[RMDB]
RNA sequence: GGGAACGACUCGAGUAGAGUCGAAAAGGAGACCCUGUGAAGCCGUCUCGGGGCCCGCUGGUGACCUGCACGUGUGAGAGCCCACAUUGCAAGGGGCCUACCUGCCGGGGGGCCUGGUGCACAGUAGUGCUGGUGCGGGAGGAGGGGAGGCACCCCCCAUACACAUAAGUUUCGACUUAUGUGUAUGAAAAGAAACAACAACAACAAC
Reactivity to DMS in 0.01 (KOAc 150mM, MgCl2 10mM, bicine 150mM(pH8.5), 24C), signal-to-noise 1, nucleotides 027 to 156: g010g020a130g000a120c040c050c010u000g020u010g000a200a100g020c060c050g000u000c050u000c040g000g010g010g030c020c020c000g050c060u040g000g020u010g000a110c030c010u000g020c070a050c110g040u010g010u010g000a150g030a210g020c100c010c000a030c030a040u010u010g040c060a120a160g040g000g020g010c060c010u000a020c030c000u000g000c060c020g020g000g020g010g040g000c000c010u010g010g010u020g010c010a050c040a190g000u000a180g000u010g000c000u010g020g020u010g000c080g000g040g000a130g020g000a150g030g000g020g000a070g010g020c020a210c000c010c000c000c030
Reactivity to 2A3 in 0.01 (KOAc 150mM, MgCl2 10mM, bicine 150mM(pH8.5), 24C), signal-to-noise 2, nucleotides 027 to 156: g010g010a040g020a030c010c000c000u010g060u030g070a100a050g030c020c050g060u040c020u030c040g000g000g000g010c000c000c000g110c040u050g000g110u060g100a150c020c000u030g000c020a040c040g040u050g000u010g050a170g030a050g100c020c100c000a050c020a040u000u180g020c030a110a080g000g000g010g040c020c010u030a060c020c000u070g110c010c050g010g010g000g000g030g000c010c030u000g010g020u070g020c020a030c030a070g140u280a040g030u060g050c040u060g040g050u110g040c010g000g000g030a030g020g010a060g000g010g000g000a050g030g000c020a080c030c000c010c000c000

Structure probing data (DMS and 2A3) for a 207-nucleotide construct. DMS adducts were read by reverse transcription with MarathonRT. Source: RMDB library OK3TST, as collected in RNAgym. For 2A3, 1,226 sequencing reads were counted. The RNA was probed in 150 mM KOAc, 10 mM MgCl2 and 150 mM bicine (pH 8.5) at 24 C. High 2A3 reactivity points to a flexible backbone, as in loops and unpaired stretches. Values cover nucleotides 27 to 156.